[RMDB]
RNA sequence: GGGAACGACUCGAGUAGAGUCGAAAAGCCUAGGGUAGUCGUCCAAACAGGGAUAGGCGACCCAUCCCCUUAUGUGAGUGAUCAGGGAGUGGCUCGUUUAGAUGAACUUGCACGUCCAAUGAGGGACAGUGAUAAUCAAUUUCGAUUGAUUAUCACUAAAAGAAACAACAACAACAAC
Reactivity to 2A3 in 0.01 (KOAc 150mM, MgCl2 10mM, bicine 150mM(pH8.5), 24C), signal-to-noise 9, nucleotides 027 to 126: g020c010c020u060a070g010g010g000u010a010g000u020c020g000u000c020c000a100a170a140c120a150g140g000g060a030u140a250g030g000c010g010a010c000c000c000a060u070c010c000c000c010u060u070a060u110g170u050g090a110g040u120g050a090u080c050a040g040g020g020a040g040u050g080g040c020u010c030g040u030u060u080a240g010a250u210g030a050a020c010u020u030g000c050a020c050g060u000c020c020a080a120u150g020a070g030g030g010a010c040
Reactivity to DMS in 0.01 (KOAc 150mM, MgCl2 10mM, bicine 150mM(pH8.5), 24C), signal-to-noise 9, nucleotides 027 to 126: g010c020c020u000a080g010g010g010u000a030g050u000c010g000u000c000c010a080a120a180c300a180g000g000g010a040u000a050g030g010c010g010a030c050c010c010a130u010c060c000c010c030u000u010a050u010g010u010g010a070g000u010g000a120u000c050a120g010g010g000a100g030u000g000g010c050u000c060g010u000u000u000a080g010a130u010g000a060a050c030u000u000g010c050a050c080g000u000c010c020a100a060u000g000a090g000g000g000a070c130
This 177-nucleotide RNA was probed chemically with 2A3 and DMS. The DMS profile rests on 36,573 reads. The 2A3 profile rests on 42,030 reads. Source: RMDB library OK2TRN, as collected in RNAgym. The RNA was probed in 150 mM KOAc, 10 mM MgCl2 and 150 mM bicine (pH 8.5) at 24 C. 2A3 is a SHAPE reagent: it acylates the 2'-hydroxyl of flexible nucleotides of all four kinds.